Background
The data come from the RNA Mapping Database (RMDB), library TTRDES. The record gives the reactivity of an RNA of 177 nucleotides to 2A3 and DMS. The RNA was probed in 150 mM KOAc, 10 mM MgCl2 and 150 mM bicine (pH 8.5) at 24 C. For 2A3, 7,696 sequencing reads were counted.
[RMDB]
RNA sequence: GGGAACGACUCGAGUAGAGUCGAAAAAGAUAUGGAUCACAUUGUCAGGGAUUACGUGUGAUGACCUCUUCUCGGAAACGAGAAGAGCAAGCACGAAGAUCCCUUGGAUUUAUGUGAUCCUAAGUCAUCUAUUUUGGUAGUUCGCUACCAAAAUAGAAAAAGAAACAACAACAACAAC
Reactivity to 2A3 in 0.01 (KOAc 150mM, MgCl2 10mM, bicine 150mM(pH8.5), 24C), signal-to-noise 3, nucleotides 027 to 126: a000g100a060u100a070u180g010g000a000u000c000a000c010a010u000u060g020u020c010a000g010g030g020a010u000u040a030c050g000u040g010u030g110a300u110g060a090c030c020u000c000u000u010c000u010c010g010g060a070a100a080c000g010a000g010a010a010g000a000g010c010a060a090g000c000a000c020g050a140a060g050a030u000c000c000c030u000u040g020g000a000u000u300u180a010u020g010u000g010a010u000c000c000u000a020a010g010u020c010a050
Reactivity to DMS in 0.01 (KOAc 150mM, MgCl2 10mM, bicine 150mM(pH8.5), 24C), signal-to-noise 4, nucleotides 027 to 126: a080g010a050u000a300u010g000g000a010u000c000a020c000a000u000u000g000u000c000a060g010g000g010a020u000u000a190c020g030u000g000u000g000a120u010g000a120c300c000u000c000u000u000c000u000c000g010g000a100a090a170c000g020a020g010a000a000g000a000g010c040a040a120g020c000a010c000g000a210a160g000a020u000c000c000c000u000u010g020g000a010u010u010u000a010u010g020u000g010a000u000c000c000u000a010a080g010u000c020a250
For DMS, 5,148 sequencing reads were counted.